[RMDB]
RNA sequence: GGGAACGACUCGAGUAGAGUCGAAAAUGUGCCCAGCUGAUUGCUGAUUCUUAAAGGGAGGGGAAGAGGCACCCUGAAUACACAUAAUGAGGCAAGUUACUGAUAGAAUGAUAUUGUGCCUGUAAGUGAUGCAGAGGCAGAAAACAAGUGAAGCAUAACUACUCCACUACUUCGGUAGUGGAGUAGUAAAAGAAACAACAACAACAAC
Reactivity to 2A3 in 0.01 (KOAc 150mM, MgCl2 10mM, bicine 150mM(pH8.5), 24C), signal-to-noise 2, nucleotides 027 to 156: u140g040u070g010c000c020c000a000g020c030u060g030a130u080u040g020c000u000g000a060u030u040c000u050u150a100a070a030g000g000g000a060g000g010g000g020a030a040g000a050g040g000c030a080c000c030c000u060g050a030a020u090a040c030a000c030a120u130a110a040u140g040a030g050g000c030a060a020g030u120u060a090c040u050g040a060u040a040g110a120a060u030g090a020u080a120u200u160g040u030g060c010c010u020g030u060a060a020g010u000g080a110u060g000c040a000g010a030g100g000c020a000g060a030a080a000a030c060a060a030g070u110g120a000a020g090c270a050u300a080
Reactivity to DMS in 0.01 (KOAc 150mM, MgCl2 10mM, bicine 150mM(pH8.5), 24C), signal-to-noise 1, nucleotides 027 to 156: u010g000u000g000c000c010c010a180g020c040u020g000a140u010u000g010c030u030g000a160u000u000c040u000u010a050a060a200g020g040g000a050g080g000g020g050a080a060g020a130g000g100c000a170c050c010c020u040g010a070a060u000a100c060a060c070a210u010a120a170u000g040a070g020g000c070a020a170g010u010u000a070c040u000g000a110u020a050g010a090a130u010g060a010u010a120u020u000g000u000g010c010c030u010g000u010a030a090g040u000g010a110u000g000c080a100g010a080g020g020c000a090g000a110a030a040a080c040a070a040g030u000g020a090a040g020c010a060u000a050

Source: RMDB library OK3TST, as collected in RNAgym. Chemical mapping of a 207-nucleotide RNA with 2A3 and DMS. 2A3 is a SHAPE reagent: it acylates the 2'-hydroxyl of flexible nucleotides of all four kinds.